[RMDB]
RNA sequence: GGGAACGACUCGAGUAGAGUCGAAAACAACUAAAGAGCAAAGUUAGUGAGUUGCACUUAUCCAUUUGCUAAAUACUACAUAACAGAGCACAGAAAUAUUGUGUAAUUUACUUGUUAUCUAUACUCGCGUGCUGGCUGAGUUCGCUCAGCCAGCACGAAAAGAAACAACAACAACAAC
Reactivity to 2A3 in 0.01 (KOAc 150mM, MgCl2 10mM, bicine 150mM(pH8.5), 24C), signal-to-noise 2, nucleotides 027 to 126: c030a000a000c000u270a110a030a030g130a030g000c030a080a080a080g140u120u040a000g000u000g000a000g000u000u020g010c070a000c000u010u010a000u010c000c050a110u020u010u020g050c000u000a000a000a090u090a140c100u210a060c000a300u180a210a290c180a150g130a000g110c000a000c000a000g110a000a100a000u110a030u130u240g010u000g000u000a000a020u000u000u000a000c000u090u240g060u060u000a020u050c030u040a010u020a080c030u140c020g000
Chemical mapping of a 177-nucleotide RNA with 2A3. Values are in units of 0.01, from 0 to 300, in steps of 10. The reactions ran in a buffer of 150 mM KOAc, 10 mM MgCl2 and 150 mM bicine (pH 8.5), at 24 C. For 2A3 the reverse transcriptase was SuperScript II with manganese.